RNA sequence: GGGAACGACUCGAGUAGAGUCGAAAAGAUAUGGAGUACCAUCCGUUCAGGCGAAGAACUCGGAAACGAGGGAGCCUGACGGACAUUUACUCCUAAGUCAAAACGGAGCUAGUUCGCUAGCUCCGAACAAAUCGCUACAGUUCGCUGUAGCGAUUUGAAAAGAAACAACAACAACAAC
Reactivity to 2A3 in 0.01 (KOAc 150mM, MgCl2 10mM, bicine 150mM(pH8.5), 24C), signal-to-noise 2, nucleotides 027 to 126: g020a000u070a050u180g020g010a000g010u000a080c000c030a020u000c010c020g000u240u220c020a010g000g000c050g120a300a050g010a120a100c000u010c010g030g090a020a130a060c000g030a000g010g010g000a000g000c000c000u000g000a000c010g000g030a000c000a010u170u160u020a000c010u020c010c000u030a260a080g090u050c060a000a000a090a110c050g010g000a000g000c010u000a000g020u060u130c250g000c220u000a010g020c110u000c000c000g010a000a000
Reactivity to DMS in 0.01 (KOAc 150mM, MgCl2 10mM, bicine 150mM(pH8.5), 24C), signal-to-noise 2, nucleotides 027 to 126: g000a030u020a300u000g000g000a010g000u000a020c300c170a300u020c000c010g000u010u000c000a020g010g000c000g000a120a140g010a070a220c020u000c000g020g000a060a110a210c000g000a030g000g000g000a070g020c010c000u000g020a020c000g000g000a010c010a030u000u010u010a000c010u010c000c000u000a040a100g010u000c030a060a040a090a160c000g010g000a020g010c000u000a000g000u000u020c180g010c000u000a000g000c000u000c000c010g000a010a030
Record summary: An RNA of 177 nucleotides, treated with 2A3 and DMS and read out base by base. The reactions ran in a buffer of 150 mM KOAc, 10 mM MgCl2 and 150 mM bicine (pH 8.5), at 24 C. It was measured as part of the RMDB library TTRDEL. For DMS the reverse transcriptase was MarathonRT. For 2A3 the reverse transcriptase was SuperScript II with manganese. For DMS, 1,823 sequencing reads were counted.